Annotation: Chemical mapping of a 177-nucleotide RNA with DMS. It was measured as part of the RMDB library TTRINS. Conditions: 150 mM KOAc, 10 mM MgCl2 and 150 mM bicine (pH 8.5), 24 C. For DMS, 1,054 sequencing reads were counted.
RNA sequence: GGGAACGACUCGAGUAGAGUCGAAAAGAUAUGGACUAGAGAACUACGGUCCGAAGAUCAACAGCAGGUGGCAAAUCGGAAACGAUUUGCCACCUGACAUGAUUGUAGACCGCUCUAGUCCUAAGUCCAUAAGUGCUCUGUUCGCAGAGCACUUAUGAAAAGAAACAACAACAACAAC
Reactivity to DMS in 0.01 (KOAc 150mM, MgCl2 10mM, bicine 150mM(pH8.5), 24C), signal-to-noise 2, nucleotides 027 to 126: g020a120u010a300u010g000g020a040c010u000a000g000a030g010a140a050c130u000a300c070g010g010u010c000c060g010a060a140g010a010u000c000a030a090c300a210g050c000a010g010g020u000g010g000c000a010a010a000u000c000g020g000a140a130a300c000g000a000u000u000u000g000c010c000a000c000c000u000g000a000c030a090u000g010a010u000u000g010u010a220g000a030c030c040g010c010u000c010u010a010g000u000c000c000u000a010a080g030u030c060